The data come from the RNA Mapping Database (RMDB), libraries RFM100 and RFMREP. Chemical mapping of a 177-nucleotide RNA with 2A3 and DMS. Values are in units of 0.01, from 0 to 300, in steps of 10. DMS adducts were read by reverse transcription with MarathonRT. 2A3 adducts were read by reverse transcription with SuperScript II with manganese.

RNA sequence: GGGAACGACUCGAGUAGAGUCGAAAAAAAGCAAAUGAUUAGAGGGCUUGGGAAUGUAAUGUUCUUAACCUAUUCUCAAACUUUAAAUAUGUAAGACGUACUUGUUUCUUAAUUGAACUUGUACAUGGCAUAAGUUGAGAUUCGUCUCAACUUAUGCAAAAGAAACAACAACAACAAC
Reactivity to 2A3 in 0.01 (KOAc 150mM, MgCl2 10mM, bicine 150mM(pH8.5), 24C), signal-to-noise 7, nucleotides 027 to 126: a000a000a000g120c130a120a090a020u100g020a060u040u100a050g020a090g030g010g050c080u020u030g010g030g020a040a000u020g010u290a090a120u210g040u080u010c010u020u030a050a030c000c010u010a050u050u010c010u010c000a080a100a100c000u060u110u150a050a180a080u270a100u130g100u160a070a060g070a050c080g000u000a010c000u040u020g130u150u140u030c030u070u090a120a130u220u050g000a000a000c000u000u000g000u010a010c020a050u100g070
Reactivity to DMS in 0.01 (KOAc 150mM, MgCl2 10mM, bicine 150mM(pH8.5), 24C), signal-to-noise 4, nucleotides 027 to 126: a060a020a070g010c130a080a080a080u020g010a070u030u010a050g010a090g010g020g000c300u020u000g000g000g010a030a010u010g000u010a110a070u080g020u000u010c020u000u000a040a100c020c010u010a030u000u000c020u010c010a020a060a090c060u000u010u010a040a050a080u040a090u020g000u020a090a070g030a160c120g000u000a000c000u000u000g000u030u000u000c020u000u000a060a090u010u000g010a020a000c000u000u000g000u010a000c000a060u020g000